RNA sequence: GGGAACGACUCGAGUAGAGUCGAAAACGGUGAAAGUACAGGCGGGUACGGCAGAGUGCGGCCGCAUUACUUUUGUAAUGAGCACUCCGGCCGCAGCCUCCGUCGCCGCCUCGACGGAGGGGACCGGCCAUCAGGCAGGAUUCGUCCUGCCUGAUGGAAAAGAAACAACAACAACAAC
Reactivity to DMS in 0.01 (KOAc 150mM, MgCl2 10mM, bicine 150mM(pH8.5), 24C), signal-to-noise 3, nucleotides 027 to 126: c050g010g030u010g000a120a070a110g000u000a050c040a030g000g000c020g000g010g020u010a010c000g020g040c160a100g010a070g010u000g010c000g010g010c020c040g010c010a000u000u000a000c000u000u000u010u010g030u000a010a000u000g000a130g000c090a150c080u000c110c040g020g030c010c010g030c000a100g000c010c000u000c000c000g000u000c020g000c010c010g000c010c010u000c010g010a010c030g000g000a020g000g010g000g000a090c120c080g010g010
Reactivity to 2A3 in 0.01 (KOAc 150mM, MgCl2 10mM, bicine 150mM(pH8.5), 24C), signal-to-noise 3, nucleotides 027 to 126: c050g080g050u180g080a280a110a040g010u030a020c020a000g010g020c020g010g000g030u050a030c040g090g060c130a030g030a020g150u050g010c010g000g000c010c000g000c010a000u010u000a010c010u100u280u210u300g010u010a000a000u030g010a010g080c050a030c150u050c010c040g000g000c000c000g010c010a030g050c010c000u020c020c000g000u000c000g000c000c000g000c000c010u000c000g000a000c010g020g010a000g030g010g010g020a070c060c040g070g060
This 177-nucleotide RNA was probed chemically with DMS and 2A3. DMS (dimethyl sulfate) methylates the pairing face of unpaired adenines and cytosines. The reactions ran in a buffer of 150 mM KOAc, 10 mM MgCl2 and 150 mM bicine (pH 8.5), at 24 C.